[RMDB]
RNA sequence: GGGAACGACUCGAGUAGAGUCGAAAAAUGUGCUGUUAACGCGAUUCAACCUUAAUAGGAUAUGCUAAACACUGCCGUUUGAAGUCUGUUUAGAAGAAACUUAAUCAAGCUAGCAUCAUGUUGGUUGUUUAUCACUUUUCAUGAUGCGAAACUUUUCGCAACAUGACUACUUCGGUAGUCAUGUUGCAAAAGAAACAACAACAACAAC
Reactivity to 2A3 in 0.01 (KOAc 150mM, MgCl2 10mM, bicine 150mM(pH8.5), 24C), signal-to-noise 3, nucleotides 027 to 156: a000u190g050u100g050c010u030g080u250u090a180a060c100g040c010g070a060u150u130c040a100a140c000c050u150u130a100a100u100a170g030g000a030u080a040u140g010c010u000a000a000a010c000a000c000u010g010c010c020g000u000u020u020g000a000a000g020u010c020u010g030u000u000u030a030g000a070a040g050a110a090a020c060u140u170a040a010u050c020a010a000g030c030u040a000g000c000a000u000c000a000u000g030u080u040g110g010u040u110g090u130u220u120a230u200c020a040c040u260u180u040u050c000a000u000g000a000u000g000c000g000a020a000a000c010u000u040u000u070c090
Reactivity to DMS in 0.01 (KOAc 150mM, MgCl2 10mM, bicine 150mM(pH8.5), 24C), signal-to-noise 1, nucleotides 027 to 156: a150u000g030u010g000c030u000g000u020u010a030a060c000g020c060g000a100u010u000c010a150a250c030c030u000u010a050a070u000a050g020g010a140u010a150u010g020c020u010a040a050a020c000a060c050u000g040c030c080g000u010u000u010g020a040a090g010u010c220u000g000u000u010u000a060g000a060a090g000a120a080a050c150u010u000a060a110u000c090a000a020g030c000u000a300g010c000a020u000c020a030u010g010u000u000g010g010u000u000g060u030u000u000a260u000c060a050c050u000u010u000u000c010a050u000g030a000u020g010c000g000a120a050a060c040u000u000u000u040c100